RNA sequence: GGGAACGACUCGAGUAGAGUCGAAAAUUGAGGAUUUACCCGAAUGUGAACUAAAUCACUUCAAAGACGGGGGAAGUCUCAGUAUCAUCAUGAGAGUUAAACCCUCGCCGCCAGACGGUGAGGGUUUAUGGACCGAAUUAUUCGUAAUUCGGUCCAUAAAAGAAACAACAACAACAAC
Reactivity to 2A3 in 0.01 (KOAc 150mM, MgCl2 10mM, bicine 150mM(pH8.5), 24C), signal-to-noise 1, nucleotides 027 to 126: u010u000g000a060g020g020a000u030u080u110a120c000c030c000g070a030a050u090g050u000g010a010a000c030u130a140a000a110u030c020a020c000u030u000c160a080a240a000g080a080c000g000g000g000g000g010a000a000g010u010c000u000c000a090g020u140a060u260c130a090u020c030a060u070g050a010g050a010g090u000u130a000a090a000c010c000c000u000c000g000c000c000g020c030c040a110g090a160c000g050g010u000g000a000g000g020g000u000u000u000
Reactivity to DMS in 0.01 (KOAc 150mM, MgCl2 10mM, bicine 150mM(pH8.5), 24C), signal-to-noise 2, nucleotides 027 to 126: u000u000g000a060g020g000a070u000u000u010a140c000c010c010g000a140a190u000g000u000g000a040a080c130u020a070a190a120u000c040a000c040u000u000c190a080a050a170g020a140c070g010g000g010g000g000a020a020g000u010c000u000c000a000g020u010a070u020c090a090u010c160a060u010g000a170g000a060g010u000u000a010a040a110c000c000c000u000c000g010c010c000g040c040c250a140g030a170c000g010g010u000g000a030g000g000g000u000u000u010